[RMDB]
RNA sequence: GGGAACGACUCGAGUAGAGUCGAAAACACAAUUCUCUAAGCGAUGAGAAGCGUGUGGAAAAUUAGGGAAGGGCUACGGCUAUAAUCCUAAGAAAGCUUAUCUACAAGCGGAGGUAUUCUGAGAACGAAAACCAUUUGGCGUUCGCGCCAAAUGGAACGAGACUAAGUACUUCGGUACUUAGUCUCGAAAAGAAACAACAACAACAAC
Reactivity to DMS in 0.01 (KOAc 150mM, MgCl2 10mM, bicine 150mM(pH8.5), 24C), signal-to-noise 2, nucleotides 027 to 156: c010a020c020a090a140u000u000c000u000c020u000a110a190g050c130g020a230u000g010a040g010a020a030g020c280g000u000g030u000g010g000a110a060a140a130u020u020a030g030g000g000a130a080g060g020g020c020u000a050c160g050g060c000u000a110u000a060a120u000c020c000u000a030a090g020a160a150a100g000c020u010u000a080u010c150u000a110c120a080a030g010c020g020g030a120g010g000u000a130u000u010c020u000g000a100g050a110a090c100g000a110a060a140a130c000c000a000u000u000u000g000g000c000g020u000u000c300g000c000g000c020c000a010a010a020u000g000g030a060a030
Reactivity to 2A3 in 0.01 (KOAc 150mM, MgCl2 10mM, bicine 150mM(pH8.5), 24C), signal-to-noise 2, nucleotides 027 to 156: c000a000c010a010a060u030u000c010u000c010u100a220a130g150c070g120a120u060g020a050g010a020a010g000c050g010u040g000u080g040g010a050a060a020a120u090u060a040g000g010g020a020a070g090g050g030c030u050a020c130g010g000c000u010a020u060a220a040u140c010c030u030a010a010g030a060a040a010g020c030u070u050a020u120c020u080a060c080a090a050g020c040g030g010a040g000g040u080a110u120u120c060u040g040a000g040a080a040c050g040a080a070a000a000c010c000a000u000u000u010g000g010c000g020u040u000c210g010c000g000c120c000a010a000a000u000g000g000a000a010
About this RNA: An RNA of 207 nucleotides, treated with DMS and 2A3 and read out base by base. 2A3 adducts were read by reverse transcription with SuperScript II with manganese.